This 177-nucleotide RNA was probed chemically with DMS. Reactivities are given for positions 27 through 126. For DMS the reverse transcriptase was MarathonRT. The reactions ran in a buffer of 150 mM KOAc, 10 mM MgCl2 and 150 mM bicine (pH 8.5), at 24 C.

[RMDB]
RNA sequence: GGGAACGACUCGAGUAGAGUCGAAAAGAUAUGGACGGUCACAGGGAGAGCAUCGGAAACGAUGCUUCUUUGAUCUGUAGCCGUCCUAAGUCAAAGGUAUAGGGUAGGUUCGCCUACCCUAUACCAAGUGUGCAACUUUGUUCGCAAAGUUGCACACAAAAGAAACAACAACAACAAC
Reactivity to DMS in 0.01 (KOAc 150mM, MgCl2 10mM, bicine 150mM(pH8.5), 24C), signal-to-noise 1, nucleotides 027 to 126: g010a040u010a200u010g010g000a010c020g030g000u000c030a010c000a040g020g010g000a000g020a050g000c000a000u010c000g000g000a070a090a080c000g020a000u010g000c000u010u000c000u000u000u020g000a050u020c010u000g030u000a110g020c010c000g000u000c000c000u000a000a070g000u000c010a100a160a150g000g000u000a000u000a010g000g000g010u000a000g020g000u000u020c300g010c000c000u000a020c000c000c000u020a000u000a000c000c000a010a010